[RMDB]
RNA sequence: GGGAACGACUCGAGUAGAGUCGAAAAGGGAAACCUACUCGCGCGAGGCGGAGAUCGAGCGCCAGUUCGUGCGCGGCGACCUGAAGUCGCUUCGGCUUCUUCUUGUUCGCGUCCUGCGUGGAACGGCUCCUUCUGCGCACCAGCCGGAGUUGGAAACGAAUCUUUAACACUUCGGUGUUAAAGAUUCAAAAGAAACAACAACAACAAC
Reactivity to 2A3 in 0.01 (KOAc 150mM, MgCl2 10mM, bicine 150mM(pH8.5), 24C), signal-to-noise 2, nucleotides 027 to 156: g110g020g030a100a070a010c010c010u020a010c000u020c010g150c020g010c030g110a070g000g010c010g010g150a010g000a010u020c020g010a000g000c020g110c110c020a050g000u020u000c040g090u060g040c010g000c010g000g000c000g000a000c000c000u010g000a000a010g000u010c020g000c000u000u070c210g130g000c000u000u010c000u010u000c000u000u050g130u260u030c000g010c010g060u160c020c050u070g000c010g010u020g010g010a000a010c010g010g000c000u010c000c000u000u020c000u070g130c010g010c020a180c020c030a020g010c040c020g060g000a010g000u030u080g000g010a070a070a020c090
An RNA of 207 nucleotides, treated with 2A3 and read out base by base. For 2A3 the reverse transcriptase was SuperScript II with manganese. The data come from the RNA Mapping Database (RMDB), library VIROID.